Structure probing data (DMS) for a 177-nucleotide construct. Reactivities are given for positions 27 through 126. Conditions: 150 mM KOAc, 10 mM MgCl2 and 150 mM bicine (pH 8.5), 24 C. The data come from the RNA Mapping Database (RMDB), library OK2TRN.
RNA sequence: GGGAACGACUCGAGUAGAGUCGAAAAGUGUGGGAUAGACGGGACUAGUCUUGGCCGUGGUCUUCCAAGAGGAUGCUAAAUGAGUCGUGGUGCAUACGGUGGUUCCAUGGAGGAACGGUACGUGGUGCGAGGCUUAAACAUUCGUGUUUAAGCCUCGAAAAGAAACAACAACAACAAC
Reactivity to DMS in 0.01 (KOAc 150mM, MgCl2 10mM, bicine 150mM(pH8.5), 24C), signal-to-noise 2, nucleotides 027 to 126: g010u000g060u010g000g000g000a070u010a070g010a030c080g000g000g000a060c060u000a110g020u000c080u000u010g010g010c050c040g000u000g010g010u010c030u000u000c020c010a050a070g010a090g010g010a030u000g000c020u010a020a080a050u000g000a040g010u000c020g010u000g000g020u010g010c070a050u010a040c100g010g020u000g010g000u000u010c000c000a150u020g010g000a180g000g000a010a050c030g000g010u000a060c020g010u000g000g010u000g010